[RMDB]
RNA sequence: GGGAACGACUCGAGUAGAGUCGAAAAUUUAGGGGUAUCCCAAUAUCACUCUCUAGGGGUGACUCAGAGCAGGGGAAGGAGUUACCCCUAAAAAGUAUGUUAGAAUGAUUUUAUCGCAUCAUAUCCUACUGUGCUCCCUAUUCGUAGGGAGCACAGUAAAAGAAACAACAACAACAAC
Reactivity to 2A3 in 0.01 (KOAc 150mM, MgCl2 10mM, bicine 150mM(pH8.5), 24C), signal-to-noise 1, nucleotides 027 to 126: u080u070u030a020g020g000g020g010u030a040u060c000c000c010a000a030u100a070u020c030a030c000u030c000u000c000u100a100g000g000g050g000u000g090a050c000u000c010a020g020a060g070c120a030g030g000g010g070a020a120g100g000a000g000u000u020a000c010c000c010c000u000a010a010a010a010a010g100u070a070u090g050u030u170a060g040a130a060u120g090a150u030u010u100u170a110u120c030g040c060a030u010c000a000u040a090u070c020c010u010